[RMDB]
RNA sequence: GGGAACGACUCGAGUAGAGUCGAAAAUGCGUCCUCGCCUAGGCGUAGAUGAAUCGGGGAAAGGAGAUUUUUUUGGUCCUCUAUGUAUCGCGGGAGUCUAUGCUCGCGAUGCGGAGACUUUGAAAAACUGAUUCCUAUAGUUCGCUAUAGGAAUCAGAAAAGAAACAACAACAACAAC
Reactivity to 2A3 in 0.01 (KOAc 150mM, MgCl2 10mM, bicine 150mM(pH8.5), 24C), signal-to-noise 4, nucleotides 027 to 126: u080g020c020g020u040c000c000u030c030g050c020c020u040a070g000g030c010g070u030a020g010a090u110g030a050a090u090c030g000g010g020g020a020a070a010g070g050a100g030a110u020u010u010u010u010u050u140g060g000u090c090c030u000c040u030a100u220g010u000a000u010c000g010c000g000g010g010a030g060u080c120u220a110u260g050c010u000c000g000c000g000a000u000g000c000g000g000a000g000a010c030u160u150u150g110a080a040a060a010a010
Reactivity to DMS in 0.01 (KOAc 150mM, MgCl2 10mM, bicine 150mM(pH8.5), 24C), signal-to-noise 5, nucleotides 027 to 126: u000g010c080g010u000c020c030u000c060g020c030c040u010a130g010g010c010g010u000a050g000a060u010g000a080a060u000c050g020g000g010g010a020a060a040g000g020a120g010a020u000u000u010u010u000u010u000g000g000u000c060c040u000c020u000a060u020g020u000a010u000c000g010c000g000g000g000a070g000u020c220u010a100u020g000c010u000c000g010c000g000a010u000g020c010g000g000a060g000a030c030u000u010u000g000a040a040a030a060a170

Structure probing data (2A3 and DMS) for a 177-nucleotide construct. DMS adducts were read by reverse transcription with MarathonRT. Source: RMDB library OK2TST, as collected in RNAgym. Reactivities are given for positions 27 through 126. Values are in units of 0.01, from 0 to 300, in steps of 10. For 2A3 the reverse transcriptase was SuperScript II with manganese. Conditions: 150 mM KOAc, 10 mM MgCl2 and 150 mM bicine (pH 8.5), 24 C.